Structure probing data (2A3 and DMS) for a 170-nucleotide construct.
[RMDB]
RNA sequence: GGGAACGACUCGAGUAGAGUCGAAAAGAGUUAACGUGCCCUACGUGUGUCUCCUAGCUAAUAAAGAGCAAGAAGCUAUUUUGAUGUCUGAAGACGUUAAGUUAAACCCUUCAGAAGAUUUUAUAAAGACCCGCAGAGUUCGCUCUGCGGAAAAGAAACAACAACAACAAC
Reactivity to 2A3 in 0.01 (KOAc 150mM, MgCl2 10mM, bicine 150mM(pH8.5), 24C), signal-to-noise 2, nucleotides 027 to 129: g030a060g070u050u050a120a000c010g040u050g050c020c000c000u000a020c030g050u030g020u000g000u030c000u050c030c000u000a020g060c000u060a050a010u040a190a160a000g160a000g000c000a110a020g070a090a000g000c030u050a070u110u110u100u060g140a060u100g050u020c000u000g000a000a000g040a000c010g030u050u100a000a000g000u000u040a110a050a020c070c010c000u020u110c050a060g000a000a020g130a030u000u000u010u030a190u030a100a120a000g000a040c000
Reactivity to DMS in 0.01 (KOAc 150mM, MgCl2 10mM, bicine 150mM(pH8.5), 24C), signal-to-noise 2, nucleotides 027 to 129: g030a070g090u000u000a100a060c010g030u000g070c020c030c030u010a050c040g020u090g050u000g000u030c020u000c000c000u030a120g000c020u050a080a040u010a090a150a090g030a050g010c050a110a030g020a130a100g020c070u000a000u040u080u000u020g020a100u050g000u060c000u010g000a010a030g030a040c300g000u000u000a040a080g000u130u030a040a030a030c120c060c020u000u040c040a000g010a040a080g010a090u020u020u120u030a110u000a100a110a070g000a100c150
2A3 is a SHAPE reagent: it acylates the 2'-hydroxyl of flexible nucleotides of all four kinds. For 2A3 the reverse transcriptase was SuperScript II with manganese. For 2A3, 2,482 sequencing reads were counted.